[RMDB]
Structure probing data (2A3 and DMS) for a 177-nucleotide construct.
DMS (dimethyl sulfate) methylates the pairing face of unpaired adenines and cytosines.
Reactivities are rounded to 0.1 and cut off at 0 and 3.
It was measured as part of the RMDB libraries RFM100 and RFMREP.
For DMS the reverse transcriptase was MarathonRT.
Reactivities are given for positions 27 through 126.
RNA sequence: GGGAACGACUCGAGUAGAGUCGAAAAGUUCAGCACACUAAACAUCCCGUCUCGCAUCCCCUUAACUGGCUGUUUAACCUGAUAAAGUUCCCUGCGCAGUUCCUGUACUUCGUUGUUAUCCCAAGCAGUAACAGGCAGAAUUCGUUCUGCCUGUUACAAAAGAAACAACAACAACAAC
Reactivity to 2A3 in 0.01 (KOAc 150mM, MgCl2 10mM, bicine 150mM(pH8.5), 24C), signal-to-noise 3, nucleotides 027 to 126: g050u080u100c040a020g040c030a040c000a000c060u130a060a000a040c020a030u070c010c000c030g060u040c000u010c030g120c030a070u100c000c000c000c000u060u050a060a080c010u040g050g030c000u000g060u100u130u100a080a050c010c010u030g080a030u090a120a060a010g040u050u010c000c000c000u010g020c070g000c000a020g020u030u050c010c010u030g010u040a060c020u030u050c070g030u000u020g030u000u050a050u020c000c000c010a050a050g080c050a000
Reactivity to DMS in 0.01 (KOAc 150mM, MgCl2 10mM, bicine 150mM(pH8.5), 24C), signal-to-noise 4, nucleotides 027 to 126: g000u010u000c060a070g010c070a090c110a060c040u040a070a140a080c110a110u010c010c010c020g010u020c040u000c060g000c060a110u000c040c010c030c030u020u040a080a080c060u020g020g000c020u010g030u000u000u010a060a070c040c040u010g000a060u020a060a060a070g000u020u000c010c000c000u010g000c040g020c050a070g020u000u000c010c010u000g010u000a040c090u020u000c060g010u000u000g020u010u000a090u020c010c010c010a070a120g030c180a140